[RMDB]
RNA sequence: GGGAACGACUCGAGUAGAGUCGAAAAAUGCAGCUCCUGCAUGCAGUGCUCCAGUGCCUCCACAUGGUCCACCAGCAGGCGCUUUGAGUACAGGAUUUUCUGCAGCAGAUGAUCCUGGAUUACCUGGAUCGAUAUUUACCUUCGGGUAAAUAUCGAUAAAAGAAACAACAACAACAAC
Reactivity to DMS in 0.01 (KOAc 150mM, MgCl2 10mM, bicine 150mM(pH8.5), 24C), signal-to-noise 4, nucleotides 027 to 126: a080u040g010c120a040g000c040u000c060c000u000g030c010a080u020g020c130a130g000u010g010c080u000c010c170a070g010u020g020c050c060u000c130c050a090c030a090u000g000g000u020c300c050a050c040c050a090g000c130a020g020g010c090g020c020u000u010u020g000a100g000u000a060c020a000g000g000a030u000u010u000u000c010u000g060c170a140g020c110a040g010a030u000g000a000u000c000c000u000g000g010a090u020u010a070c020c000u010g020g020
Reactivity to 2A3 in 0.01 (KOAc 150mM, MgCl2 10mM, bicine 150mM(pH8.5), 24C), signal-to-noise 6, nucleotides 027 to 126: a010u150g020c030a020g010c010u030c020c010u020g000c020a090u090g030c040a010g020u010g020c010u010c010c010a020g020u020g070c020c030u110c120c000a060c030a180u070g030g010u050c040c020a050c000c010a050g010c000a010g010g000c000g000c000u060u030u160g040a020g010u040a040c020a020g010g030a020u020u030u030u000c020u050g120c100a190g060c050a000g030a020u040g000a000u010c000c000u010g030g040a090u070u070a120c000c010u050g080g050